[RMDB]
RNA sequence: GGGAACGACUCGAGUAGAGUCGAAAAGGAGGCAGCAGUGGGGAAUAUUGGACAAUGGGCGGAAGCCUGAUCCAGCAACGCCGCGUGAGGGAUGACGGCCUUCGGGUUGUAAACCUCUUUCAGUAUCACAUUAUCUUCGGUUCGCCGAAGAUAAUGUAAAAGAAACAACAACAACAAC
Reactivity to DMS in 0.01 (KOAc 150mM, MgCl2 10mM, bicine 150mM(pH8.5), 24C), signal-to-noise 7, nucleotides 027 to 126: g000g010a060g000g010c050a050g020c050a070g020u000g010g020g000g020a100a090u010a100u000u010g010g010a040c090a100a070u010g020g010g030c010g010g020a090a140g010c010c020u010g010a060u010c030c020a080g000c090a050a130c080g000c040c030g020c140g020u000g010a040g010g010g000a060u010g000a170c300g000g000c010c020u000u010c150g010g010g010u000u000g020u000a030a240a250c020c010u000c050u000u010u000c060a090g000u000a090u010c160
Reactivity to 2A3 in 0.01 (KOAc 150mM, MgCl2 10mM, bicine 150mM(pH8.5), 24C), signal-to-noise 3, nucleotides 027 to 126: g070g030a060g010g020c030a010g000c030a030g070u050g040g010g010g000a020a100u080a080u060u110g020g000a020c050a110a100u100g010g010g050c000g060g060a070a010g000c000c010u020g010a020u000c010c000a010g040c020a040a020c030g020c040c010g030c010g020u070g020a020g040g020g000a050u300g010a040c000g000g020c000c000u020u040c110g070g000g000u030u050g010u020a040a030a020c000c000u030c050u020u100u040c070a060g030u060a080u160c050
Structure probing data (DMS and 2A3) for a 177-nucleotide construct. The 2A3 profile rests on 4,513 reads.